An RNA of 177 nucleotides, treated with 2A3 and DMS and read out base by base. The 2A3 profile rests on 1,256 reads. Reactivities are given for positions 27 through 126. The reactions ran in a buffer of 150 mM KOAc, 10 mM MgCl2 and 150 mM bicine (pH 8.5), at 24 C. The data come from the RNA Mapping Database (RMDB), library RFMREP.
[RMDB]
RNA sequence: GGGAACGACUCGAGUAGAGUCGAAAAUGUUAAAAGUUUCAUCCAUUUGUACUGUUAAGAACUGGCUUGGUUGAUAGUUUAAUCAGAUAACGACAUAUGGUAUGCCAGGUGUAACUCAUGUUGACAUUACAAGACAAAUGUUCGCAUUUGUCUUGUAAAAAGAAACAACAACAACAAC
Reactivity to 2A3 in 0.01 (KOAc 150mM, MgCl2 10mM, bicine 150mM(pH8.5), 24C), signal-to-noise 2, nucleotides 027 to 126: u060g020u040u060a070a100a010a110g020u010u070u060c010a040u020c010c000a030u050u000u080g000u020a060c020u030g040u070u050a140a010g060a130a020c010u020g010g050c000u010u040g100g080u150u050g100a060u020a100g020u030u080u060a080a080u060c000a020g050a160u010a090a020c010g030a000c020a030u100a040u080g030g000u080a030u080g040c020c000a010g050g000u020g010u010a040a020c000u020c050a060u080g000u040u020g010a000c000a020u000
Reactivity to DMS in 0.01 (KOAc 150mM, MgCl2 10mM, bicine 150mM(pH8.5), 24C), signal-to-noise 3, nucleotides 027 to 126: u000g010u010u010a060a090a130a100g000u000u000u000c010a080u010c030c030a060u000u000u010g010u010a100c050u010g010u000u000a080a130g010a050a050c020u000g010g010c020u000u000g000g010u010u010g000a060u010a070g000u000u000u000a120a110u000c040a050g000a130u010a050a090c220g000a050c010a030u000a070u000g000g000u010a090u000g010c040c020a050g020g020u000g000u000a050a060c110u010c140a070u010g000u000u010g000a070c160a080u000